An RNA of 177 nucleotides, treated with DMS and 2A3 and read out base by base.
[RMDB]
RNA sequence: GGGAACGACUCGAGUAGAGUCGAAAAGUGAAAAUACCCAGAGAGUUAAGAAGGAAUGUGCAACCAUCCGUCUGUAAAGGCGGUAAAUUGAUGGCUGGCCUGAUAUAAGGCUGGCGCACCGUAUCGGGAUGACACUCUACUUCGGUAGAGUGUCAUCAAAAGAAACAACAACAACAAC
Reactivity to DMS in 0.01 (KOAc 150mM, MgCl2 10mM, bicine 150mM(pH8.5), 24C), signal-to-noise 3, nucleotides 027 to 126: g000u010g000a060a110a130a090u040a110c010c000c000a120g010a100g010a140g000u030u010a070a070g010a050a030g000g000a090a040u000g020u000g010c020a110a060c010c000a120u010c000c000g020u000c010u000g000u070a080a080a030g000g000c020g000g000u000a000a000a080u030u010g000a080u010g000g010c000u000g010g020c000c010u020g000a160u030a090u050a110a020g000g000c010u000g000g000c010g020c040a010c070c230g000u020a040u020c130g010g000
Reactivity to 2A3 in 0.01 (KOAc 150mM, MgCl2 10mM, bicine 150mM(pH8.5), 24C), signal-to-noise 1, nucleotides 027 to 126: g030u030g110a090a020a010a050u090a060c020c000c020a000g000a000g000a000g040u090u110a130a130g000a060a110g040g030a010a110u010g010u000g090c000a030a020c000c000a010u080c020c020g010u030c000u010g170u100a030a140a050g000g000c000g020g000u010a000a000a000u080u130g110a090u090g160g000c000u000g000g000c000c000u060g010a080u100a040u060a250a000g000g000c010u000g000g010c000g000c000a000c000c000g050u080a150u210c080g030g100
For DMS the reverse transcriptase was MarathonRT. Source: RMDB libraries RFM100 and RFMREP, as collected in RNAgym.